[RMDB]
Structure probing data (DMS and 2A3) for a 177-nucleotide construct.
The 2A3 profile rests on 3,984 reads.
Conditions: 150 mM KOAc, 10 mM MgCl2 and 150 mM bicine (pH 8.5), 24 C.
For 2A3 the reverse transcriptase was SuperScript II with manganese.
Source: RMDB library OK2TRN, as collected in RNAgym.

RNA sequence: GGGAACGACUCGAGUAGAGUCGAAAAGUCGUGGACCACCCACAGCGGGCAGCUGCCGCCGACCCGGCUGAAGUGAAACGCCGUCGCGGACUGUCGCUUUGAGAUGUUUCCGGCCUUGUCGGUGCGGACUUAUGCCUAACUUCGGUUAGGCAUAAGUAAAAGAAACAACAACAACAAC
Reactivity to DMS in 0.01 (KOAc 150mM, MgCl2 10mM, bicine 150mM(pH8.5), 24C), signal-to-noise 5, nucleotides 027 to 126: g020u000c030g040u000g010g000a190c030c030a200c050c010c010a100c100a050g010c020g010g010g010c070a050g010c130u010g010c040c020g010c050c030g000a030c060c140c080g030g000c000u010g020a150a110g030u020g000a060a100a070c130g000c020c010g010u000c060g010c010g010g000a130c100u010g010u010c010g010c020u000u000u010g000a090g010a090u010g000u010u000u000c010c000g010g000c020c020u000u020g010u000c060g000g020u000g000c050g020g010
Reactivity to 2A3 in 0.01 (KOAc 150mM, MgCl2 10mM, bicine 150mM(pH8.5), 24C), signal-to-noise 4, nucleotides 027 to 126: g050u000c030g030u080g040g160a070c010c020a030c010c020c010a050c020a010g000c020g010g080g000c020a020g020c040u130g070c020c020g010c020c050g010a050c020c010c010g020g010c020u070g070a200a080g120u140g240a150a050a010c040g000c000c020g010u020c040g000c030g000g050a080c080u080g030u100c010g000c060u040u030u060g120a210g020a090u080g040u020u070u000c040c010g010g040c000c000u120u150g100u090c060g010g020u120g180c030g000g000